[RMDB]
RNA sequence: GGGAACGACUCGAGUAGAGUCGAAAAGAGCGCCGAAUGCACGGCGUCGGCAUCGCCGUCGCGCGCCGCUGCCGACGCCUUCGAUGCCGGCGCGUUCGCGCCCGGCGCGCGCUCGGCGGCAACGCGACAUUACUGCCCGUUUCGACGGGCAGUAAUGAAAAGAAACAACAACAACAAC
Reactivity to DMS in 0.01 (KOAc 150mM, MgCl2 10mM, bicine 150mM(pH8.5), 24C), signal-to-noise 1, nucleotides 027 to 126: g000a140g010c020g030c000c050g030a110a060u010g010c130a120c140g010g030c010g020u000c020g000g010c020a070u000c150g000c050c170g040u010c090g020c040g010c150g000c090c020g000c050u040g030c050c000g010a030c040g000c040c050u000u000c090g000a070u010g000c000c020g010g010c120g020c020g000u010u030c140g000c020g000c000c030c030g020g020c020g020c070g000c050g000c020u000c010g010g000c010g020g010c020a050a040c000g000c020g010a060

Structure probing data (DMS) for a 177-nucleotide construct. For DMS the reverse transcriptase was MarathonRT. The DMS profile rests on 1,402 reads. The reactions ran in a buffer of 150 mM KOAc, 10 mM MgCl2 and 150 mM bicine (pH 8.5), at 24 C.